[RMDB]
RNA sequence: GGGAACGACUCGAGUAGAGUCGAAAAGUUGAGUGGAGCAGCCUUUAGUGCAGAUCUUGGUGGAAGUAGCAAAUAUUCAAGUGGGAUCCUUGAAGACUGAAGUGGGGAAGGGUUCCAUGGUAACAGCACAGACUGUGACUUUCGAGUCACAGUCUGUAAAAGAAACAACAACAACAAC
Reactivity to DMS in 0.01 (KOAc 150mM, MgCl2 10mM, bicine 150mM(pH8.5), 24C), signal-to-noise 2, nucleotides 027 to 126: g000u010u010g000a080g000u030g000g030a050g020c050a080g020c080c020u030u000u020a060g030u000g000c070a080g010a040u010c080u000u000g020g060u000g000g010a040a050g000u010a100g000c040a060a040a100u010a110u020u000c070a070a150g040u000g000g020g000a100u000c010c040u000u000g010a060a060g000a100c100u030g000a080a130g000u040g000g000g000g010a080a000g000g000g020u000u020c000c000a000u010g020g000u020a110a080c130a090g000c230
Reactivity to 2A3 in 0.01 (KOAc 150mM, MgCl2 10mM, bicine 150mM(pH8.5), 24C), signal-to-noise 2, nucleotides 027 to 126: g120u140u060g050a030g000u070g040g050a010g010c010a000g010c020c050u020u120u190a140g030u130g000c040a000g030a100u030c020u070u050g080g000u000g020g060a080a040g020u040a000g020c030a010a020a020u120a100u130u140c050a100a040g000u040g000g010g000a000u060c000c010u020u000g070a140a000g020a040c090u120g060a070a120g090u030g020g030g000g030a010a000g000g000g000u000u000c030c000a000u050g020g030u050a050a050c030a040g080c100
Background
This 177-nucleotide RNA was probed chemically with DMS and 2A3. Conditions: 150 mM KOAc, 10 mM MgCl2 and 150 mM bicine (pH 8.5), 24 C. Values cover nucleotides 27 to 126. The data come from the RNA Mapping Database (RMDB), libraries RFM100 and RFMREP.